[RMDB]
Structure probing data (2A3) for a 207-nucleotide construct. Source: RMDB library RNAMAK, as collected in RNAgym. Conditions: 150 mM KOAc, 10 mM MgCl2 and 150 mM bicine (pH 8.5), 24 C. For 2A3 the reverse transcriptase was SuperScript II with manganese. The 2A3 profile rests on 1,254 reads.
RNA sequence: GGGAACGACUCGAGUAGAGUCGAAAACCGUAGGUUUAAGAACUACACCAGUUACGAGCGUUGAAAUAAGCUUCGAAAGAGGCUUAUGGAGCUCGUGCUGGUGCUUAAACCUAAACGGAAAGGGCUAGAAGAAUUCUUCGGAAUUCUUCUAGCCCAAGCCUAAAUUAGGGUUCGCCCUAAUUUAGGCAAAAGAAACAACAACAACAAC
Reactivity to 2A3 in 0.01 (KOAc 150mM, MgCl2 10mM, bicine 150mM(pH8.5), 24C), signal-to-noise 1, nucleotides 027 to 156: c000c010g010u000a010g000g010u000u000u010a010a010g000a110a080c090u210a060c190a000c000c000a010g020u180u300a010c010g000a000g040c010g040u250u020g000a000a030a000u000a000a000g000c010u000u020c020g010a040a000a030g000a000g010g000c000u000u000a010u000g000g010a020g000c000u000c000g000u000g010c000u000g020g000u000g000c000u000u000a000a000a000c000c000u000a070a010a000c010g020g030a120a090a170g020g000g030c010u000a000g020a020a000g000a000a000u020u000c030u060u150c290g030g000a000a000u000u000c000u000u000c000u000a000g000c000c010c000a000a000